The record gives the reactivity of an RNA of 177 nucleotides to 2A3 and DMS. The 2A3 profile rests on 4,848 reads. For DMS the reverse transcriptase was MarathonRT. The DMS profile rests on 2,804 reads.
[RMDB]
RNA sequence: GGGAACGACUCGAGUAGAGUCGAAAAAGAUCAAACUCAACUCGGCUCGAGACUUUCAAUCUUUUGUGGCCGUACUUUUGCGGCCUGAUGGAAUUACCGAAGAUGCCAGCGAUCGAGUCGACUGGUCGGUCUUACAGAAUUUCGAUUCUGUAAGACCAAAAGAAACAACAACAACAAC
Reactivity to 2A3 in 0.01 (KOAc 150mM, MgCl2 10mM, bicine 150mM(pH8.5), 24C), signal-to-noise 4, nucleotides 027 to 126: a000g130a050u160c080a070a070a050c030u020c060a010a010c000u000c010g040g000c000u000c010g030a020g000a020c030u070u070u040c080a090a150u000c020u000u120u050u100g190u120g040g000c000c010g000u010a070c130u060u210u240u210g000c000g000g000c080c010u010g000a020u050g020g050a080a130u160u030a140c030c030g030a040a000g030a050u130g040c010c020a020g010c050g040a040u050c040g010a000g050u020c010g070a110c020u010g020g030u070c060
Reactivity to DMS in 0.01 (KOAc 150mM, MgCl2 10mM, bicine 150mM(pH8.5), 24C), signal-to-noise 3, nucleotides 027 to 126: a060g000a140u010c100a090a090a130c100u000c050a050a100c090u000c010g000g020c010u000c000g000a020g000a220c040u010u010u000c020a090a040u000c020u010u000u000u010g020u000g000g020c000c000g000u000a040c250u000u010u010u010g010c010g010g000c000c000u000g010a050u000g010g010a130a060u000u000a110c050c040g010a060a040g000a090u010g000c080c060a040g000c040g020a140u010c120g000a050g000u000c000g010a050c050u010g010g020u000c140

The RNA was probed in 150 mM KOAc, 10 mM MgCl2 and 150 mM bicine (pH 8.5) at 24 C.